[RMDB]
RNA sequence: GGGAACGACUCGAGUAGAGUCGAAAAGAUAUGGACCGUGCCAGGGAGAGCGGUAUCGGAAACGAUACUAGCUCGAGGAUCUGGCCACGGUCCUAAGUCAAAACCUAGCACCUUCGGGUGCUAGGAAGUCAGUUAACCUGUUCGCAGGUUAACUGACAAAAGAAACAACAACAACAAC
Reactivity to 2A3 in 0.01 (KOAc 150mM, MgCl2 10mM, bicine 150mM(pH8.5), 24C), signal-to-noise 1, nucleotides 027 to 126: g020a000u040a020u090g000g000a000c020c000g010u120g000c020c000a020g030g050g000a200g010a000g040c000g000g000u000a000u000c000g020g030a060a040a040c000g000a000u010a000c010u050a300g000c000u000c000g000a020g010g050a080u000c010u010g040g000c110c010a020c050g000g000u000c000c000u010a010a000g010u040c000a000a040a060a100c000c000u000a000g010c010a010c000c010u040u070c300g160g000g000u020g000c010u000a000g000g000a000a010
Reactivity to DMS in 0.01 (KOAc 150mM, MgCl2 10mM, bicine 150mM(pH8.5), 24C), signal-to-noise 1, nucleotides 027 to 126: g020a000u000a300u000g020g010a020c010c010g030u020g000c010c000a000g000g000g050a060g000a010g030c010g000g000u000a000u000c000g000g000a020a090a150c000g010a000u000a000c000u000a110g110c000u000c000g000a070g010g000a060u000c000u000g000g000c180c060a030c020g030g000u000c000c000u000a020a120g000u000c030a170a060a180a230c000c000u000a020g030c000a010c000c000u000u010c300g050g010g010u000g020c000u000a010g000g010a010a050